[RMDB]
RNA sequence: GGGAACGACUCGAGUAGAGUCGAAAAAACAUGAUGUUCAUGGAGCUCCUGUAUAUGGAUCUAUACAAGAUGAAAUUGUUGCAGCAUAUUCAUUGUUUCGUAUGGAAAAUUUGACAGUAGAUGAGGUUAUGAAUUUAUUAGGAAAAUACGGAUUGGGCGCAUAAGCUGAUUUCGAUCAGCUUAUGCGAAAAGAAACAACAACAACAAC
Reactivity to DMS in 0.01 (KOAc 150mM, MgCl2 10mM, bicine 150mM(pH8.5), 24C), signal-to-noise 2, nucleotides 027 to 156: a110a020c030a060u010g000a080u010g020u000u000c040a090u000g020g010a180g020c040u000c010c000u000g010u000a060u000a110u000g040g000a120u010c050u000a070u000a020c040a070a070g000a080u000g010a090a070a150u000u020g030u000u020g000c050a200g010c040a080u000a120u000u000c050a010u030u000g010u000u000u000c080g080u000a070u030g020g000a060a000a080a170u000u000u000g000a040c080a010g010u000a030g010a150u020g020a120g040g000u000u000a100u010g020a040a100u000u000u000a090u020u000a130g010g000a080a050a050a060u000a040c110g010g000a170u000u000g000g020g000
Reactivity to 2A3 in 0.01 (KOAc 150mM, MgCl2 10mM, bicine 150mM(pH8.5), 24C), signal-to-noise 3, nucleotides 027 to 156: a000a000c120a100u110g020a070u110g030u060u070c020a010u020g040g000a030g050c020u020c020c050u060g100u020a110u020a020u150g070g020a040u010c020u010a010u050a060c030a070a090g010a030u020g040a030a050a110u060u070g060u050u120g000c030a060g010c010a060u040a070u110u060c030a020u020u030g060u090u120u080c060g020u040a010u000g040g000a030a040a070a090u080u010u070g030a020c000a010g020u060a020g020a080u080g040a040g060g070u090u100a020u090g040a070a080u110u120u080a070u100u160a050g040g010a070a020a040a060u120a040c030g000g010a020u080u070g030g020g020
About this RNA: An RNA of 207 nucleotides, treated with DMS and 2A3 and read out base by base. Source: RMDB library OK3TST, as collected in RNAgym. For 2A3, 1,206 sequencing reads were counted. The RNA was probed in 150 mM KOAc, 10 mM MgCl2 and 150 mM bicine (pH 8.5) at 24 C.